This 207-nucleotide RNA was probed chemically with DMS and 2A3. The DMS profile rests on 2,393 reads. For DMS the reverse transcriptase was MarathonRT. The reactions ran in a buffer of 150 mM KOAc, 10 mM MgCl2 and 150 mM bicine (pH 8.5), at 24 C. The 2A3 profile rests on 2,317 reads.
RNA sequence: GGGAACGACUCGAGUAGAGUCGAAAAGUGGUUGUACGGCACGCCGUUGCAGAUCACCGCACUCACUGCCCCGAACCUCGUGAUGUUCCGCACCCGCGAGCACCCGCAGGAGUUCUACCUGUACCGCUACGAGGACAACAAGAACAACGGGCAGCGAGCCUAAUGGAUAGUUCGCUAUCCAUUAGGCAAAAGAAACAACAACAACAAC
Reactivity to DMS in 0.01 (KOAc 150mM, MgCl2 10mM, bicine 150mM(pH8.5), 24C), signal-to-noise 1, nucleotides 027 to 156: g010u000g000g040u000u000g000u000a020c010g000g040c050a090c080g050c080c050g080u000u000g000c010a070g020a080u010c060a040c000c020g010c040a070c010u000c020a010c000u010g030c000c000c010c040g020a180a080c080c020u000c020g020u010g010a170u000g000u000u010c010c060g010c070a150c070c110c030g040c030g000a060g040c040a070c040c000c050g000c080a070g020g000a130g000u000u000c070u000a130c010c000u000g000u010a080c090c010g000c070u000a070c020g000a180g010g010a070c010a080a070c050a010a080g010a070a060c000a070a160c150g060g030g060c020a020g010c010g010a130
Reactivity to 2A3 in 0.01 (KOAc 150mM, MgCl2 10mM, bicine 150mM(pH8.5), 24C), signal-to-noise 3, nucleotides 027 to 156: g020u030g010g000u050u020g020u060a000c030g020g000c120a060c130g080c000c020g060u090u170g040c040a040g030a170u080c030a000c020c030g070c060a090c010u030c010a020c000u010g010c000c010c000c000g070a090a080c020c010u020c010g020u040g050a110u050g090u040u020c130c020g000c040a140c040c070c050g020c020g010a000g020c010a040c010c030c030g000c020a000g020g010a020g010u110u050c030u050a100c010c000u010g030u120a150c050c020g030c080u090a060c110g040a060g070g000a020c030a090a000c020a110a000g060a070a030c050a020a020c020g000g000g000c000a000g000c000g030a020